[RMDB]
RNA sequence: GGGAACGACUCGAGUAGAGUCGAAAAGCCCACUAAAGAGUAGAGGAAUUCUCGGAAAGCUCUCCCAAGAAGAACCAGAAUCCCUCAAGAGAGAGGAGAAUCCCCAUGACGCUGGAAGAGACUUCCGCCCUUAUACAAGGUUCGCCUUGUAUAAGGGAAAAGAAACAACAACAACAAC
Reactivity to DMS in 0.01 (KOAc 150mM, MgCl2 10mM, bicine 150mM(pH8.5), 24C), signal-to-noise 2, nucleotides 027 to 126: g020c000c000c010a150c250u010a070a050a050g000a080g000u010a100g000a220g000g000a090a010u000u000c020u020c070g000g000a260a130a080g020c020u000c030u000c000c020c060a060a130g000a070a090g010a060a120c070c090a080g010a110a080u000c060c000c010u020c020a130a120g010a140g000a100g020a050g010g000a080g000a080a110u000c020c000c020c050a090u010g010a090c200g020c080u000g020g000a270a090g000a030g010a120c110u000u000c030c020g000
Reactivity to 2A3 in 0.01 (KOAc 150mM, MgCl2 10mM, bicine 150mM(pH8.5), 24C), signal-to-noise 1, nucleotides 027 to 126: g020c020c040c010a010c030u160a130a210a090g180a020g080u160a050g000a080g070g030a030a070u080u000c040u030c040g060g000a060a000a000g000c030u040c000u000c020c000c000a030a000g170a050a060g010a030a060c050c020a010g060a030a090u000c020c000c000u010c000a020a060g100a000g010a000g000a020g040g010a060g050a150a140u050c040c040c000c020a050u050g030a020c060g000c010u000g020g000a040a000g010a000g050a050c000u020u000c000c000g000
Conditions: 150 mM KOAc, 10 mM MgCl2 and 150 mM bicine (pH 8.5), 24 C. An RNA of 177 nucleotides, treated with DMS and 2A3 and read out base by base. The DMS profile rests on 766 reads. The data come from the RNA Mapping Database (RMDB), library 15KREP.